Chemical mapping of a 207-nucleotide RNA with 2A3. For 2A3 the reverse transcriptase was SuperScript II with manganese. Reactivities are given for positions 27 through 156. It was measured as part of the RMDB library M2RFPK. The reactions ran in a buffer of 150 mM KOAc, 10 mM MgCl2 and 150 mM bicine (pH 8.5), at 24 C.
RNA sequence: GGGAACGACUCGAGUAGAGUCGAAAAAACAUCUGAAGAUCAGCUAUUAGAAGAGAAAGAUCAGUUAAGUCCUUUGGACCUGAUCAGCUUGAUACAAGAACUACUGAUUUCAACUUCUUUGGCUUAAAAAAGGCCACAGAGUUCGCUCUGUGGCCAAGUAGCAAACUACGUUCGCGUAGUUUGCUACAAAAGAAACAACAACAACAAC
Reactivity to 2A3 in 0.01 (KOAc 150mM, MgCl2 10mM, bicine 150mM(pH8.5), 24C), signal-to-noise 1, nucleotides 027 to 156: a000a000c100a090u110c150u180g050a110a020g080a230u100c020a020g000c020u040a090u200u030a270g000a000a010g000a000g040a050a050a000g020a040u010c000a000g000u070u150a090a010g000u010c000c060u100u060u260g050g020a060c030c040u080g040a130u080c060a020g030c080u130u200g050a090u040a140c020a070a040g000a040a020c010u030a000c000u060g010a050u100u050u020c100a060a060c020u030u020c000u000u000u010g000g000c000u000u030a010a030a000a120a120a040g010g000c000c000a000c000a000g000a000g000u000u050c080g020c020u000c000u000g000u000g000g050c000c000a000a000